[RMDB]
RNA sequence: GGGAACGACUCGAGUAGAGUCGAAAACUGGUCGUCAACAAGAUCCGCGGCACCUUCAAGUCGGUGGCGGUCAAGGCUCCCGGCUUCGGCGACCGCCGCAAGGCGAUGCUGCAGGAUAUGGCCAUUCGACCCUUUAUCAGUUCGCUGAUAAAGGGUCAAAAGAAACAACAACAACAAC
Reactivity to DMS in 0.01 (KOAc 150mM, MgCl2 10mM, bicine 150mM(pH8.5), 24C), signal-to-noise 2, nucleotides 027 to 126: c120u000g010g020u020c000g040u000c170a080a080c300a070a210g020a020u000c000c030g000c000g000g000c090a090c290c090u070u030c170a080a090g020u000c020g030g060u000g000g000c030g010g000u010c050a170a250g010g000c090u000c060c020c010g010g010c040u010u030c200g020g000c110g010a060c030c020g000c000c000g000c070a020a080g000g010c030g000a060u000g000c020u010g000c000a120g030g000a030u000a020u030g000g000c000c000a060u040u020c170
Reactivity to 2A3 in 0.01 (KOAc 150mM, MgCl2 10mM, bicine 150mM(pH8.5), 24C), signal-to-noise 7, nucleotides 027 to 126: c030u020g010g010u010c020g060u070c050a080a070c050a200a130g030a110u000c010c000g000c000g010g010c010a030c030c030u130u110c130a120a050g040u050c020g020g000u020g010g000c000g000g050u050c040a050a020g090g000c010u060c040c040c030g040g000c020u130u100c070g130g000c070g050a060c010c000g000c000c000g000c020a080a150g020g000c030g030a050u060g000c000u000g000c040a200g010g000a020u030a060u120g010g000c000c000a010u070u060c040